[RMDB]
RNA sequence: GGGAACGACUCGAGUAGAGUCGAAAAUCCCAAAGCGGAUUUAGCUCGGUUGGGAGAGGACCAGACCGAAGAUCUGGCCGUCCUGUGUUCGAUCCACAGAAUUCGCACCAUAAACAACGGGAGAUUCCAUAUGCCUACUCUUCGGAGUAGGCAUAUGAAAAGAAACAACAACAACAAC
Reactivity to 2A3 in 0.01 (KOAc 150mM, MgCl2 10mM, bicine 150mM(pH8.5), 24C), signal-to-noise 5, nucleotides 027 to 126: u020c000c000c000a040a030a010g030c040g020g010a010u020u020u090a050g010c020u010c030g120g000u150u180g040g050g010a060g010a140g040g020a180c000c000a010g020a010c010c060g230a060a040g040a140u010c020u000g010g030c000c000g040u050c010c000u050g020u020g040u100u060c020g010a000u000c020c050a030c010a070g060a040a010u010u000c010g000c030a040c010c020a040u210a140a150a040c050a030a040c050g010g020g010a080g030a130u070u030c040
Reactivity to DMS in 0.01 (KOAc 150mM, MgCl2 10mM, bicine 150mM(pH8.5), 24C), signal-to-noise 4, nucleotides 027 to 126: u000c000c010c000a020a100a120g020c050g020g000a030u000u020u000a120g000c110u000c010g010g020u020u000g000g000g000a070g020a090g030g000a150c000c000a030g010a000c010c080g010a070a100g010a300u000c000u010g000g000c000c030g020u020c010c010u020g000u020g000u000u000c060g010a130u020c080c080a100c110a050g010a070a030u030u010c020g000c000a170c120c110a060u010a090a070a100c190a070a080c120g000g000g010a100g010a120u020u020c050
Structure probing data (2A3 and DMS) for a 177-nucleotide construct. DMS adducts were read by reverse transcription with MarathonRT. Values cover nucleotides 27 to 126. For 2A3, 3,326 sequencing reads were counted. 2A3 is a SHAPE reagent: it acylates the 2'-hydroxyl of flexible nucleotides of all four kinds.